[RMDB]
RNA sequence: GGGAACGACUCGAGUAGAGUCGAAAACAGCGAAGUCACUCGUUUAGACCUCGUAUCGCAGAUGUGCACUCAUAUGACCAACGACUUUUCCGCACCACAACAAAGAAACCCAUGAAACUACGGGACCUCAUGACACGCAUUCGUACGUUCACGGCUCAUUGCUACGUAGGUUCGCCUACGUAGCAAUAAAAGAAACAACAACAACAAC
Reactivity to DMS in 0.01 (KOAc 150mM, MgCl2 10mM, bicine 150mM(pH8.5), 24C), signal-to-noise 1, nucleotides 027 to 156: c110a090g010c020g000a060a070g020u020c020a240c080u000c200g010u000u000u000a130g010a060c010c040u020c050g050u010a100u000c050g030c000a070g010a100u000g210u000g040c050a130c050u000c020a110u000a170u000g000a150c080c050a040a050c090g030a110c040u010u040u010u000c030c040g000c010a120c080c040a080c040a030a000c010a040a100a080g010a110a080a120c050c020c010a150u000g000a030a080a110c050u000a020c050g010g000g010a080c070c050u000c030a100u000g010a030c080a040c000g000c010a190u000u020c050g000u000a050c070g010u000u000c020a050c000g000g000c020u000c050
Reactivity to 2A3 in 0.01 (KOAc 150mM, MgCl2 10mM, bicine 150mM(pH8.5), 24C), signal-to-noise 4, nucleotides 027 to 156: c050a010g030c010g010a070a010g060u030c030a030c090u070c110g060u080u070u100a080g020a080c000c020u010c040g030u070a100u110c040g020c070a030g020a160u100g000u030g040c030a020c060u040c030a030u050a050u180g120a130c050c020a060a030c050g070a050c030u130u080u050u000c050c010g010c010a040c020c020a020c020a100a000c000a030a160a030g070a090a050a010c010c010c000a030u120g060a050a130a030c040u050a030c030g000g000g050a020c010c010u060c020a040u120g010a050c020a010c080g050c040a080u100u080c060g040u070a070c030g020u030u060c060a020c040g030g000c000u000c020

This 207-nucleotide RNA was probed chemically with DMS and 2A3. DMS adducts were read by reverse transcription with MarathonRT. Conditions: 150 mM KOAc, 10 mM MgCl2 and 150 mM bicine (pH 8.5), 24 C. For DMS, 1,795 sequencing reads were counted. For 2A3, 2,195 sequencing reads were counted.